[RMDB]
RNA sequence: GGGAACGACUCGAGUAGAGUCGAAAACAACAAACCGCAGAAAGUCAGGCGGUAAUUCGCAGCGGAGAAUGUUCUCCGUAUGCGAAUAUCAUUCUCUGUGCUGGCGUGACGUUCUGAGGCCGUCAUGCAUCGAGGAUCCUUUCGAGGAUCCUCGAUGAAAAGAAACAACAACAACAAC
Reactivity to 2A3 in 0.01 (KOAc 150mM, MgCl2 10mM, bicine 150mM(pH8.5), 24C), signal-to-noise 4, nucleotides 027 to 126: c060a010a020c030a070a140a030c010c010g000c040a000g140a120a110a000g070u110c020a020g080g060c000g000g010u030a010a070u020u000c000g020c000a000g000c000g020g010a000g040a080a050u300g150u300u010c000u000c000c000g010u010a280u030g000c000g000a000a000u000a000u000c050a060u160u050c100u000c030u070g070u040g070c030u060g100g000c010g010u020g000a030c010g020u060u050c100u090g060a070g090g000c020c000g060u100c020a050u130g040
Reactivity to DMS in 0.01 (KOAc 150mM, MgCl2 10mM, bicine 150mM(pH8.5), 24C), signal-to-noise 2, nucleotides 027 to 126: c170a060a210c150a050a100a110c010c010g000c000a050g000a090a020a060g050u000c070a050g000g000c040g010g000u010a030a000u010u000c000g020c010a020g000c000g000g000a010g010a030a300u040g030u040u000c020u010c000c010g040u000a000u060g030c000g020a020a010u020a040u000c100a130u000u020c090u010c060u000g010u010g000c010u030g010g040c030g000u010g030a010c040g000u020u030c030u020g010a110g000g040c200c050g000u010c020a070u010g010
Source: RMDB library OK1LIB, as collected in RNAgym. Structure probing data (2A3 and DMS) for a 177-nucleotide construct. DMS adducts were read by reverse transcription with MarathonRT. Reactivities are rounded to 0.1 and cut off at 0 and 3. Reactivities are given for positions 27 through 126. For 2A3, 2,423 sequencing reads were counted. The RNA was probed in 150 mM KOAc, 10 mM MgCl2 and 150 mM bicine (pH 8.5) at 24 C.